[RMDB]
RNA sequence: GGGAACGACUCGAGUAGAGUCGAAAAGAGCAAAGGAGUACAAUAAGAUGGGAGCACGUUUUACAGAUGAUCAGUUGGAAAUGAAAGUACCAUUCUUAUGUAACGGCAUCCCAGAGGAGACACACUACCUGUUCCUUGCAUUCGUGCAAGGAACAGGAAAAGAAACAACAACAACAAC
Reactivity to DMS in 0.01 (KOAc 150mM, MgCl2 10mM, bicine 150mM(pH8.5), 24C), signal-to-noise 1, nucleotides 027 to 126: g020a120g000c100a010a110a050g040g010a130g030u010a030c070a090a050u000a060a020g000a150u010g030g020g000a170g020c110a030c020g000u000u000u020u000a140c040a070g010a050u020g020a100u000c240a110g000u020u000g000g010a020a020a020u000g000a040a050a110g020u000a150c010c010a030u010u020c030u000u020a070u000g030u040a030a040c050g010g010c020a120u000c000c000c020a110g000a100g000g030a060g000a020c070a020c110a120c150u000a200
Reactivity to 2A3 in 0.01 (KOAc 150mM, MgCl2 10mM, bicine 150mM(pH8.5), 24C), signal-to-noise 1, nucleotides 027 to 126: g060a000g040c040a100a010a010g110g020a080g030u080a070c060a090a150u080a070a050g040a070u060g000g010g000a010g040c040a020c110g020u040u030u060u070a060c020a020g050a080u120g040a100u120c020a070g010u110u050g000g040a140a090a010u110g070a200a090a010g090u050a040c000c000a000u080u060c070u070u170a060u040g000u000a020a000c000g030g000c010a100u000c000c000c010a000g010a020g090g020a070g020a020c040a000c010a000c060u060a070